RNA sequence: GGGAACGACUCGAGUAGAGUCGAAAAAAGGGUGAAAUGGUGCGGUAAGAGCGCACCGCGCUGGUGGCAACAUCAGUGGCAGGGUAAACCCCACCCGGAGCAAGACCAAAUAGGGGAACUCGCGGCUGUUCCGCAUAAAUUUCGAUUUAUGCGGAACAAAAGAAACAACAACAACAAC
Reactivity to 2A3 in 0.01 (KOAc 150mM, MgCl2 10mM, bicine 150mM(pH8.5), 24C), signal-to-noise 4, nucleotides 027 to 126: a010a000g050g020g010u070g030a090a090a090u090g010g010u000g000c000g000g000u020a030a010g000a000g030c020g000c000a000c000c000g010c000g000c000u010g000g000u010g010g000c020a080a030c000a110u000c000a000g000u000g000g010c000a020g040g000g020u140a160a180a130c010c010c000c000a010c000c000c000g000g000a030g010c080a080a040g030a070c000c010a060a090a030u240a110g000g020g000g010a030a030c010u020c020g050c020g070g030c030u040
Reactivity to DMS in 0.01 (KOAc 150mM, MgCl2 10mM, bicine 150mM(pH8.5), 24C), signal-to-noise 2, nucleotides 027 to 126: a110a050g020g000g010u010g000a070a110a030u020g000g010u000g010c000g000g000u060a140a080g030a280g000c030g010c000a020c010c000g000c000g000c010u010g000g010u010g000g000c270a140a170c000a000u000c000a000g010u000g000g000c010a080g000g010g010u000a040a050a150c000c000c000c020a020c020c000c000g000g000a200g000c150a050a050g000a170c030c030a050a060a080u040a090g000g000g030g000a080a010c000u000c030g010c110g000g010c110u010